RNA sequence: GGGAACGACUCGAGUAGAGUCGAAAAUCCAGCGAGAGGCGUAGGAGAGAGGGCCGCGGUGCUCUGGAGUAGAGGCUUCUAGCUUUCAAAACACCAUCAAUCGUCCCUUCUUCUUCCCUUUCAACGGGUUCUUCGGUUGAAACCCAACCGGGGGCUCCCACUAUAUAUCCUUCGGGAUAUAUAGUGGAAAAGAAACAACAACAACAAC
Reactivity to 2A3 in 0.01 (KOAc 150mM, MgCl2 10mM, bicine 150mM(pH8.5), 24C), signal-to-noise 2, nucleotides 027 to 156: u010c010c000a010g070c020g000a010g010a010g060g020c190g070u030a010g020g000a010g000a030g030a030g020g000g000c030c020g020c110g000g040u010g000c000u000c020u010g000g010a060g040u030a020g000a020g040g000c030u210u210c110u300a090g010c030u280u300u160c030a040a020a030a040c010a010c080c110a050u090c090a020a190u150c010g020u020c000c000c010u000u000c000u000u020c000u010u030c010c000c020u000u000u000c010a020a020c020g000g000g010u150u160c000u080u080c000g000g000u040u060g020a110a080a080c000c000c000a000a000c000c000g010g000g000g000g030c010u000c010